The record gives the reactivity of an RNA of 207 nucleotides to 2A3. The RNA was probed in 150 mM KOAc, 10 mM MgCl2 and 150 mM bicine (pH 8.5) at 24 C. For 2A3 the reverse transcriptase was SuperScript II with manganese. Source: RMDB library OK3TST, as collected in RNAgym.

RNA sequence: GGGAACGACUCGAGUAGAGUCGAAAAUUCUGGAUUAUCCCUCGGAUAAAUAGGAUCAUCUAUCAGAGUCCAUGUAUUGCUGGAUUCACAAUAAAAUUCCGCAUUUCUACCAACCAAGAAUAACCUUCUACCGAACACUAACGCGCAUGAUUUAUAAGCCUAGUAGGAAUUUCGAUUCCUACUAGGCAAAAGAAACAACAACAACAAC
Reactivity to 2A3 in 0.01 (KOAc 150mM, MgCl2 10mM, bicine 150mM(pH8.5), 24C), signal-to-noise 1, nucleotides 027 to 156: u090u000c040u040g060g000a070u060u000a030u130c030c030c100u190c090g030g000a120u080a130a080a110u210a110g010g010a030u050c010a010u020c060u110a110u110c040a050g000a000g070u010c040c020a030u050g050u090a160u030u160g030c030u000g000g070a000u000u040c030a010c060a150a140u200a220a070a020a040u170u030c000c000g050c010a010u050u100u000c040u060a100c010c050a210a030c000c000a130a000g090a040a010u050a030a010c000c000u050u000c010u090a140c010c010g100a030a030c050a000c160u100a160a020c010g030c010g000c160a010u050g010a040u160u000u120a190u040a110a030